Background:
Structure probing data (2A3 and DMS) for a 207-nucleotide construct.

RNA sequence: GGGAACGACUCGAGUAGAGUCGAAAAUAAUUGUGUGUGAGCAUGCGCUUUUGUGUUUUUAGAACUCGUAACCAUCAUACCAUACAGUUUCACCGUGAAGCUCGGAGACGUUAAUGAGGAGUCAUUGCUCUGUUAACCUCAGAUGAUGAUGACACUAAAUUUAUCCCAUGUUCGCAUGGGAUAAAUUAAAAGAAACAACAACAACAAC
Reactivity to 2A3 in 0.01 (KOAc 150mM, MgCl2 10mM, bicine 150mM(pH8.5), 24C), signal-to-noise 6, nucleotides 027 to 156: u180a000a040u070u040g030u010g010u010g000u020g060a040g040c070a050u060g020c030g020c080u040u040u070u090g070u020g050u020u070u030u050u130a100g030a060a030c030u010c070g040u060a030a030c050c010a030u070c010a020u040a110c050c000a020u040a110c020a060g000u020u010u050c100a070c060c050g030u050g050a040a030g040c030u040c050g030g010a060g020a000c040g030u040u060a080a030u150g110a050g070g010a030g010u010c020a040u010u060g010c000u000c010u000g020u070u090a110a090c020c040u020c010a010g000a050u060g000a040u010g010a000u020g010a020c010a000c080u090a060
Reactivity to DMS in 0.01 (KOAc 150mM, MgCl2 10mM, bicine 150mM(pH8.5), 24C), signal-to-noise 4, nucleotides 027 to 156: u000a040a080u000u000g020u000g020u000g020u000g010a090g040c050a080u000g030c080g010c070u000u010u000u000g010u010g020u010u000u000u010u000a140g020a040a080c030u000c050g030u000a080a100c050c020a070u000c030a100u010a110c070c040a110u000a070c050a050g010u010u000u000c050a110c100c110g030u010g010a090a090g010c020u000c040g010g010a100g010a090c080g020u000u000a040a060u000g010a090g000g010a260g010u000c050a070u000u000g010c010u000c020u020g020u000u010a080a070c090c120u000c020a140g000a060u000g000a060u010g000a080u020g010a060c030a050c070u010a080
Background
DMS adducts were read by reverse transcription with MarathonRT. Conditions: 150 mM KOAc, 10 mM MgCl2 and 150 mM bicine (pH 8.5), 24 C. DMS (dimethyl sulfate) methylates the pairing face of unpaired adenines and cytosines.